[RMDB]
The record gives the reactivity of an RNA of 177 nucleotides to 2A3 and DMS. The data come from the RNA Mapping Database (RMDB), library TTRDEL. The DMS profile rests on 3,347 reads.
RNA sequence: GGGAACGACUCGAGUAGAGUCGAAAAGAUAUGGACCAUACAGGGAGCUGAAGUCGGAAACGACUAGCGACGAUCUGUUUGGUCCUAAGUCAAAAUCAGAGUAGCUUCUUCGGAAGCUACUCUGAAAGAACCACAUAUACUUCGGUAUAUGUGGUUCAAAAGAAACAACAACAACAAC
Reactivity to 2A3 in 0.01 (KOAc 150mM, MgCl2 10mM, bicine 150mM(pH8.5), 24C), signal-to-noise 3, nucleotides 027 to 126: g020a000u040a040u160g000g000a010c000c000a020u010a020c000a020g050g010g020a040g010c020u120g200a280a040g040u000c010g000g040a060a070a060c010g000a000c010u020a000g010c010g270a300c000g000a030u030c010u000g020u010u020u030g000g010u010c010c000u000a010a000g020u020c010a020a040a000a230u040c000a000g000a000g010u010a000g010c000u010u000c010u070u150c300g040g000a000a000g020c000u000a000c020u000c000u000g000a000a000a010
Reactivity to DMS in 0.01 (KOAc 150mM, MgCl2 10mM, bicine 150mM(pH8.5), 24C), signal-to-noise 3, nucleotides 027 to 126: g000a020u000a300u000g010g000a030c000c000a010u000a010c010a020g000g000g000a140g000c000u000g010a110a050g010u000c000g000g000a140a090a180c010g010a010c000u000a090g010c010g000a060c180g000a070u010c000u000g000u000u000u000g010g000u000c000c000u000a010a050g010u000c030a110a070a150a130u010c010a010g020a040g010u000a010g010c000u000u000c000u000u020c240g030g010a030a000g000c000u000a000c000u000c000u000g000a000a050a090